RNA sequence: GGGAACGACUCGAGUAGAGUCGAAAAAGGUGUGGAGCGACCUUAAACAGUUCUGGUGUUGCUCUGAAUGGAGUGCUCUACUGAGAUUAUAAAAUAGAAGGUAAGCUAUUAUCUCUUACAACAGGGCGAAGCACUCGGGGGUUCGCCCCCGAGUGAACUGAUCUGUUCUGUUCGCAGAACAGAUCAGAAAAGAAACAACAACAACAAC
Reactivity to 2A3 in 0.01 (KOAc 150mM, MgCl2 10mM, bicine 150mM(pH8.5), 24C), signal-to-noise 2, nucleotides 027 to 156: a000g050g000u040g020u070g040g000a010g020c000g010a010c000c000u140u200a160a050a000c020a040g000u010u000c010u050g000g100u080g020u000u070g040c010u000c010u000g040a060a090u180g060g000a040g050u060g050c010u040c060u060a070c060u060g010a020g010a120u130u090a080u190a120a150a040a050u060a020g100a100a020g100g050u160a040a000g020c010u000a000u070u010a070u090c010u000c000u050u070a050c050a150a030c020a060g020g030g010c030g050a060a010g060c000a000c000u000c000g000g000g010g000g010u040u070c100g090c000c000c000c010c000g000a000g000u000g000a000a030

Structure probing data (2A3) for a 207-nucleotide construct. Reactivities are given for positions 27 through 156. Source: RMDB library M2RFPK, as collected in RNAgym. The reactions ran in a buffer of 150 mM KOAc, 10 mM MgCl2 and 150 mM bicine (pH 8.5), at 24 C.